RNA sequence: GGGAACGACUCGAGUAGAGUCGAAAAUCCACAAGUGUGGUUUCCCUGGCCAAUCCACUUGUAAUGUGUAUUUUGUAAAUAACGCAAAAUGUGCAUUAGAAGUGGAUUGGUCAAGAGAACCGCACUUCGUCUUUUCUCUGUUCGCAGAGAAAAGACGAAAAGAAACAACAACAACAAC
Reactivity to 2A3 in 0.01 (KOAc 150mM, MgCl2 10mM, bicine 150mM(pH8.5), 24C), signal-to-noise 5, nucleotides 027 to 126: u020c000c000a060c040a070a010g010u010g000u010g020g010u010u070u100c030c020c000u000g000g010c000c000a000a000u010c000c000a010c010u050u030g200u100a000a010u000g000u000g000u000a010u000u000u000u000g010u020a080a190a270u170a220a160c210g010c000a000a000a000a000u000g000u000g010c000a000u000u020a010g020a020a000g000u000g000g000a000u000u000g000g000u000c000a000a000g000a010g000a000a000c000c000g000c000a000c000u020u010
Overview:
The data come from the RNA Mapping Database (RMDB), libraries RFM100 and RFMREP. This 177-nucleotide RNA was probed chemically with 2A3.